[RMDB]
RNA sequence: GGGAACGACUCGAGUAGAGUCGAAAACUGGUUCCGUGAGGACCAGCGGCUGCUGCCCUGCCGCAAGUACGAGCAGAUCGAAGAGGGCACUGUCCGGCGCCUCAUCAUCCACAGGCUGAAGGCAGACAACGAUAGUCUGAUUCGUCAGACUAUCGUUAAAAGAAACAACAACAACAAC
Reactivity to DMS in 0.01 (KOAc 150mM, MgCl2 10mM, bicine 150mM(pH8.5), 24C), signal-to-noise 5, nucleotides 027 to 126: c030u000g000g000u000u010c000c010g010u010g010a190g000g010a040c010c010a040g020c010g000g000c010u000g010c130u010g010c000c010c010u010g030c020c010g010c130a130a100g010u000a120c100g000a100g010c130a100g010a120u000c090g030a120a080g000a050g020g000g000c050a070c050u010g020u010c030c040g000g010c190g000c020c010u010c070a090u010c080a070u000c050c080a080c150a070g010g010c040u000g010a140a100g010g000c030a050g010a180c220
Reactivity to 2A3 in 0.01 (KOAc 150mM, MgCl2 10mM, bicine 150mM(pH8.5), 24C), signal-to-noise 4, nucleotides 027 to 126: c010u020g000g010u170u050c030c030g130u240g050a170g010g020a010c000c010a000g000c020g000g010c010u050g010c030u030g000c000c000c000u020g030c000c000g030c070a080a040g080u130a090c050g030a050g050c100a070g080a240u110c060g030a070a060g050a060g090g000g020c030a020c030u030g090u060c000c030g000g010c010g060c020c000u050c020a100u060c020a050u060c030c030a090c040a080g020g010c000u090g070a040a020g020g000c000a010g020a050c040

Chemical mapping of a 177-nucleotide RNA with DMS and 2A3.
For 2A3, 5,732 sequencing reads were counted.
It was measured as part of the RMDB library OK2TRN.
The RNA was probed in 150 mM KOAc, 10 mM MgCl2 and 150 mM bicine (pH 8.5) at 24 C.
For DMS the reverse transcriptase was MarathonRT.
2A3 adducts were read by reverse transcription with SuperScript II with manganese.